[RMDB]
RNA sequence: GGGAACGACUCGAGUAGAGUCGAAAAGGCAAUGGAGGAAGUUGUUUGGCCAGUAGGAUUAACUGGCGGUAGCGAUCUUCCCACUGUUUAUGAGCACUGAAUGUCUCAAGCAGAUUGGCAGCAGUGAACUCCGCGAAAAAUUCGUUUUUCGCGGAGUAAAAGAAACAACAACAACAAC
Reactivity to DMS in 0.01 (KOAc 150mM, MgCl2 10mM, bicine 150mM(pH8.5), 24C), signal-to-noise 1, nucleotides 027 to 126: g000g000c030a050a040u000g040g000a070g010g010a010a100g030u000u000g000u000u000u000g000g000c010c000a010g040u010a040g000g010a270u000u020a040a020c040u000g000g000c000g040g010u000a000g000c040g000a040u010c070u000u000c000c000c030a170c090u000g000u000u000u000a070u020g010a120g010c070a050c050u010g010a050a160u000g030u000c020u000c070a020a060g030c170a040g010a070u010u000g000g000c000a060g030c030a060g000u000g010a190